Annotation:
The record gives the reactivity of an RNA of 177 nucleotides to 2A3 and DMS. Conditions: 150 mM KOAc, 10 mM MgCl2 and 150 mM bicine (pH 8.5), 24 C. DMS adducts were read by reverse transcription with MarathonRT.

[RMDB]
RNA sequence: GGGAACGACUCGAGUAGAGUCGAAAAUUGUUAAGGAAUAUCCGCGAGAGCAAAUUAAAAUUGCUACGAAAGGGUCUCAUGAAUUUGAUGAAAAUCAAGAAGUACAUCAGAACAAUCAACCGGAAUAUCAAAUAGGAUCCUUCGGGAUCCUAUUUGAAAAAGAAACAACAACAACAAC
Reactivity to 2A3 in 0.01 (KOAc 150mM, MgCl2 10mM, bicine 150mM(pH8.5), 24C), signal-to-noise 3, nucleotides 027 to 126: u030u000g030u010u140a040a020g050g010a090a050u040a080u160c000c000g030c010g060a140g040a000g300c000a000a030a050u080u060a140a160a050a110u030u040g010c000u020a040c030g040a060a090a090g040g000g000u040c010u020c030a040u100g060a140a140u040u070u020g020a050u010g060a000a070a000a050u120c040a010a090g080a170a010g140u110a050c000a000u020c010a040g030a100a020c020a040a110u110c060a020a050c020c000g090g020a060a070u180a050
Reactivity to DMS in 0.01 (KOAc 150mM, MgCl2 10mM, bicine 150mM(pH8.5), 24C), signal-to-noise 2, nucleotides 027 to 126: u020u020g010u000u000a060a120g000g010a070a120u000a020u000c000c020g000c060g010a190g000a000g020c030a000a010a100u020u050a080a060a100a130u000u010g010c040u000a020c060g010a080a090a120g000g020g000u040c060u010c110a050u000g000a070a120u010u010u000g000a030u020g010a130a030a110a010u040c070a080a000g000a040a050g040u020a040c060a030u020c120a070g000a050a040c030a030a050u020c090a130a180c160c000g040g020a050a090u000a070